[RMDB]
RNA sequence: GGGAACGACUCGAGUAGAGUCGAAAACUUUAACCUCAAAACUAAGACAUUAUUGUUAGUUGCGAGAAGCUGGCCAAUAUUUCUUGUACCUGAAUUGAUUAAAUUGUUACAUGUUAUUAGAUGAUGGUGACAACCUACAACUUGUUAAGGAUACAUAUGUUUACUACUCUUUCGAGAGUAGUAAACAAAAAGAAACAACAACAACAAC
Reactivity to DMS in 0.01 (KOAc 150mM, MgCl2 10mM, bicine 150mM(pH8.5), 24C), signal-to-noise 4, nucleotides 027 to 156: c070u000u000u010a090a160c040c040u000c030a080a170a120a100c080u010a060a150g020a130c100a130u020u000a100u010u000g000u000u000a080g020u010u000g040c280g010a130g010a100a190g020c030u010g010g020c050c060a050a140u000a050u000u000u000c010u020u000g030u000a050c020c030u000g010a060a090u000u010g000a140u010u000a050a060a070u000u000g000u000u000a050c070a060u010g020u000u000a060u000u000a140g000a210u000g000a060u000g020g020u000g010a040c020a060a080c030c010u000a030c030a030a040c050u000u000g010u000u000a090a200g000g000a080u000a020c020a050u000a100
Reactivity to 2A3 in 0.01 (KOAc 150mM, MgCl2 10mM, bicine 150mM(pH8.5), 24C), signal-to-noise 5, nucleotides 027 to 156: c030u140u150u200a060a070c010c000u020c020a060a080a000a040c040u080a080a030g150a060c030a100u130u200a120u200u220g060u050u030a050g000u000u010g010c010g010a020g020a030a010g030c020u070g050g000c000c040a070a080u060a100u110u100u010c050u060u070g030u020a040c000c010u010g090a120a110u080u070g030a070u090u230a060a060a100u100u070g050u060u040a060c050a080u070g030u100u070a110u080u040a090g030a090u110g020a030u050g050g040u010g010a010c040a050a030c030c010u080a080c060a140a130c080u050u040g020u080u090a040a060g050g010a060u050a120c020a030u120a010

Background: This 207-nucleotide RNA was probed chemically with DMS and 2A3. High DMS reactivity at an A or C suggests that its Watson-Crick edge is free. For 2A3, 2,173 sequencing reads were counted. The RNA was probed in 150 mM KOAc, 10 mM MgCl2 and 150 mM bicine (pH 8.5) at 24 C. DMS adducts were read by reverse transcription with MarathonRT. For 2A3 the reverse transcriptase was SuperScript II with manganese.